About this RNA
The record gives the reactivity of an RNA of 177 nucleotides to DMS. Reactivities are given for positions 27 through 126. It was measured as part of the RMDB library OK2TRN. DMS (dimethyl sulfate) methylates the pairing face of unpaired adenines and cytosines. The RNA was probed in 150 mM KOAc, 10 mM MgCl2 and 150 mM bicine (pH 8.5) at 24 C. For DMS the reverse transcriptase was MarathonRT.
RNA sequence: GGGAACGACUCGAGUAGAGUCGAAAAGUUGUCAGUCAAACUUGUUUGUUUUGGAAAGGAACUUCAUAGAGCUCUGAAAACCAGUUCAAAGGACAAACCCUUUGACUUUGGUAUUAAGUGAAUGUCAUCACGGGAACAAUUUCGAUUGUUCCCGUGAAAAAGAAACAACAACAACAAC
Reactivity to DMS in 0.01 (KOAc 150mM, MgCl2 10mM, bicine 150mM(pH8.5), 24C), signal-to-noise 1, nucleotides 027 to 126: g010u010u000g010u000c040a100g010u010c090a060a070a020c080u010u000g020u000u000u030g010u010u000u000u000g040g010a070a110a250g010g000a040a030c010u000u000c090a100u020a060g010a140g030c040u000c080u000g000a070a070a080a060c010c050a020g010u010u000c040a000a030a020g010g010a120c110a120a100a170c300c010c030u000u000u000g000a010c070u000u000u000g020g010u000a040u000u000a070a090g010u000g000a060a020u000g020u000c070a180